The data come from the RNA Mapping Database (RMDB), library OK3TST. The record gives the reactivity of an RNA of 207 nucleotides to 2A3 and DMS. Values are in units of 0.01, from 0 to 300, in steps of 10. The DMS profile rests on 7,200 reads. The RNA was probed in 150 mM KOAc, 10 mM MgCl2 and 150 mM bicine (pH 8.5) at 24 C. For 2A3 the reverse transcriptase was SuperScript II with manganese.

RNA sequence: GGGAACGACUCGAGUAGAGUCGAAAAGUGUUCGUACGUGAGUACACACGUUCGAGAACUCACACACGAACACACACACGUGAUCACGUACUCUCACGAGUGAGUACGAGUUCGUUCACGUGUACGAUCGAGAGUGUACGUGAACGUACUCGUGAGAUACAAGAUACUGCUUCGGCAGUAUCUUGUAAAAAGAAACAACAACAACAAC
Reactivity to 2A3 in 0.01 (KOAc 150mM, MgCl2 10mM, bicine 150mM(pH8.5), 24C), signal-to-noise 8, nucleotides 027 to 156: g010u010g000u000u000c010g010u020a060c080g010u010g000a010g070u180a020c080a020c040a030c170g070u200u270c160g070a120g040a140a010c000u000c000a000c000a000c000a000c000g010a000a000c000a000c010a000c000a000c000a000c020g060u040g040a110u110c060a020c170g060u120a070c070u010c010u010c050a040c040g020a050g020u020g030a030g050u090a000c020g010a010g020u030u040c010g000u010u000c000a000c000g000u000g010u000a000c020g060a110u250c160g020a040g030a030g210u010g000u010a010c000g000u000g000a000a000c000g000u000a000c000u000c000g000u010g010a040g010a000
Reactivity to DMS in 0.01 (KOAc 150mM, MgCl2 10mM, bicine 150mM(pH8.5), 24C), signal-to-noise 3, nucleotides 027 to 156: g010u000g030u000u000c010g040u000a020c020g030u000g000a050g030u000a050c140a160c060a160c120g020u000u010c080g010a200g000a160a080c010u000c030a040c030a100c020a040c010g010a040a050c000a040c020a110c100a070c030a060c040g030u000g000a100u000c040a110c040g000u000a060c050u000c040u000c060a150c100g000a120g020u000g020a120g010u000a030c000g000a020g040u010u000c040g050u000u000c000a010c000g000u000g010u000a000c040g000a220u000c120g010a190g010a230g030u000g000u000a020c020g030u000g000a030a010c030g000u000a000c000u010c010g000u000g010a150g000a200